Chemical mapping of a 207-nucleotide RNA with DMS and 2A3.
The reactions ran in a buffer of 150 mM KOAc, 10 mM MgCl2 and 150 mM bicine (pH 8.5), at 24 C.
Reactivities are given for positions 27 through 156.
For DMS the reverse transcriptase was MarathonRT.
Values are in units of 0.01, from 0 to 300, in steps of 10.
The 2A3 profile rests on 434 reads.
RNA sequence: GGGAACGACUCGAGUAGAGUCGAAAAGCACAAGACUUCGAACAUUACAGCAGUUAGUAGUUGCCUAAACCCAUUGCAAUAUAUGGGACAGUAGAGGUCGCAAGCCUAUACUGUGCGGUGAACAUUCAAAAGGGAUGGUACUUCGGUACCAUCCCAACUGUGCAGUCAAGUUCGCUUGACUGCACAGAAAAGAAACAACAACAACAAC
Reactivity to DMS in 0.01 (KOAc 150mM, MgCl2 10mM, bicine 150mM(pH8.5), 24C), signal-to-noise 1, nucleotides 027 to 156: g030c050a080c020a000a170g040a110c050u000u020c040g010a120a120c090a050u000u010a030c080a230g050c090a090g000u000u000a150g010u000a140g010u000u000g010c030c090u010a010a080a210c000c000c000a030u000u000g000c090a120a090u010a110u010a010u000g000g010g050a100c010a030g000u000a030g000a060g000g030u000c050g040c300a020a300g020c020c000u000a080u000a000c030u010g060u010g080c070g070g030u000g010a010a100c040a070u000u000c050a030a090a200a200g000g030g030a020u000g050g050u000a000c020u000u000c290g050g030u000a000c000c000a000u030c000c000c020a000a000
Reactivity to 2A3 in 0.01 (KOAc 150mM, MgCl2 10mM, bicine 150mM(pH8.5), 24C), signal-to-noise 1, nucleotides 027 to 156: g040c020a000c000a040a010g060a030c050u140u190c240g040a120a030c070a120u180u180a010c040a030g020c010a070g080u000u070a030g030u100a000g010u170u000g020c000c010u070a070a070a070c010c010c010a000u000u040g000c000a000a010u040a000u000a000u160g000g000g000a010c010a000g000u040a020g000a000g060g030u120c060g040c090a050a000g000c040c000u010a020u000a020c000u010g060u050g120c050g040g020u040g010a000a040c040a140u120u300c200a140a000a100a060g010g010g000a000u010g000g000u000a010c010u010u080c210g000g000u000a000c000c000a000u020c000c000c000a000a000